[RMDB]
RNA sequence: GGGAACGACUCGAGUAGAGUCGAAAAAAAGUUAGCGUACUAGAGUCGCCGUGAGUACGCUUUGGUUCCGUGAGACUCUACUCGAGCGUAUCACGGAACCCACGUACAUACCGUACGUGCUAUAAAACAGCAUUUAGUAUUUCGAUACUAAAUGCUGAAAAGAAACAACAACAACAAC
Reactivity to 2A3 in 0.01 (KOAc 150mM, MgCl2 10mM, bicine 150mM(pH8.5), 24C), signal-to-noise 5, nucleotides 027 to 126: a000a030a000g090u040u020a000g000c000g010u000a000c000u020a030g090a100g190u150c070g020c110c030g120u130g060a010g000u000a000c000g000c000u020u000u010g010g000u030u010c010c010g010u010g010a050g000a000c000u000c000u010a000c000u000c010g000a000g000c000g000u010a050u020c010a000c000g000g010a010a010c010c010c010a000c000g010u000a000c010a070u140a200c040c150g000u000a000c000g000u010g000c010u090a180u110a120a090a010a010
Reactivity to DMS in 0.01 (KOAc 150mM, MgCl2 10mM, bicine 150mM(pH8.5), 24C), signal-to-noise 5, nucleotides 027 to 126: a080a040a060g000u000u000a010g010c000g020u000a000c010u000a130g000a080g000u000c050g010c040c030g020u000g010a030g010u000a000c010g000c010u000u010u000g020g010u000u000c010c010g010u000g010a150g010a020c000u000c010u000a020c030u000c030g000a020g000c070g010u000a090u000c020a050c030g000g000a040a040c060c060c010a000c010g010u010a000c010a110u000a100c300c190g010u000a000c000g010u000g010c090u010a070u010a040a080a080a130
Chemical mapping of a 177-nucleotide RNA with 2A3 and DMS. DMS adducts were read by reverse transcription with MarathonRT. The data come from the RNA Mapping Database (RMDB), library M2PK90. The reactions ran in a buffer of 150 mM KOAc, 10 mM MgCl2 and 150 mM bicine (pH 8.5), at 24 C.